[RMDB]
RNA sequence: GGGAACGACUCGAGUAGAGUCGAAAAGAUAUGGACACCUAGGGAGCUCGAUUGUAUCGGAAACGAUAUAGAGAGCAUCGAUCUAGUUGUCCUAAGUCAAACAAAUAGUGGUUCGCCACUAUUUGAACCUCAUAAGUCUGUUCGCAGACUUAUGAGGAAAAGAAACAACAACAACAAC
Reactivity to 2A3 in 0.01 (KOAc 150mM, MgCl2 10mM, bicine 150mM(pH8.5), 24C), signal-to-noise 3, nucleotides 027 to 126: g010a010u000a010u030g000g010a000c010a000c020c000u010a000g000g020g010a020g020c010u010c000g070a130u070u200g030u010a010u010c000g010g020a010a000a000c010g000a010u000a000u020a030g080a000g000a000g010c010a010u130c010g010a000u000c000u000a000g000u010u020g000u000c000c000u000a010a000g000u000c020a100a050a110c010a000a020a000u010a010g010u000g080g060u060u050c300g090c080c000a000c010u010a000u000u000u010g000a010a040
Reactivity to DMS in 0.01 (KOAc 150mM, MgCl2 10mM, bicine 150mM(pH8.5), 24C), signal-to-noise 3, nucleotides 027 to 126: g010a020u000a020u020g010g000a000c000a000c070c000u010a010g010g010g000a000g030c000u000c000g010a270u010u010g010u000a000u010c010g030g000a010a000a020c000g010a020u000a010u000a040g000a300g000a020g010c000a200u000c210g000a010u000c000u000a000g000u000u010g010u000c000c000u000a010a030g000u000c010a140a100a250c010a010a010a000u000a000g020u000g000g000u000u010c240g010c000c000a010c000u000a000u000u010u000g000a070a120
The record gives the reactivity of an RNA of 177 nucleotides to 2A3 and DMS. As a SHAPE reagent, 2A3 marks flexible, mostly unpaired nucleotides at the ribose 2'-OH. For 2A3, 7,570 sequencing reads were counted. The RNA was probed in 150 mM KOAc, 10 mM MgCl2 and 150 mM bicine (pH 8.5) at 24 C.